[RMDB]
About this RNA: An RNA of 177 nucleotides, treated with 2A3 and DMS and read out base by base. The DMS profile rests on 2,396 reads. The 2A3 profile rests on 2,813 reads.
RNA sequence: GGGAACGACUCGAGUAGAGUCGAAAAUGUCUCCGGGUCGCGCCGCUCGCGGCGGCUGCUAGCGAUGAUUCGAUGGCUCAGCGUGACCUGGAGACCUCUGAUGCAGGCUCAGGGACUGCCCGGGGUGGGCCCAGGGCUCGUUCGCGAGCCUUGGGCCAAAAGAAACAACAACAACAAC
Reactivity to 2A3 in 0.01 (KOAc 150mM, MgCl2 10mM, bicine 150mM(pH8.5), 24C), signal-to-noise 4, nucleotides 027 to 126: u180g010u000c000u000c000c000g010g000g000u000c000g000c010g000c030c030g050c030u030c050g040c020g070g000c030g070g090c100u130g010c020u020a110g000c030g070a090u180g080a130u240u170c090g060a080u160g150g000c050u060c110a020g020c010g020u030g010a000c000c000u000g000g000a000g010a000c000c000u000c000u010g050a050u130g030c030a010g040g030c010u040c080a030g030g000g080a030c020u040g020c000c010c000g010g000g010g030u140g030
Reactivity to DMS in 0.01 (KOAc 150mM, MgCl2 10mM, bicine 150mM(pH8.5), 24C), signal-to-noise 2, nucleotides 027 to 126: u080g010u000c000u010c000c000g020g020g040u000c000g020c140g020c030c070g000c050u030c210g030c150g020g000c010g020g020c050u030g030c050u040a030g000c000g020a080u060g000a170u010u010c140g000a080u010g000g050c040u000c060a140g000c000g000u030g000a030c010c000u030g020g000a000g010a000c000c000u000c030u000g020a070u000g010c070a080g000g000c070u030c110a050g000g020g000a060c050u020g000c000c020c000g000g000g000g010u040g000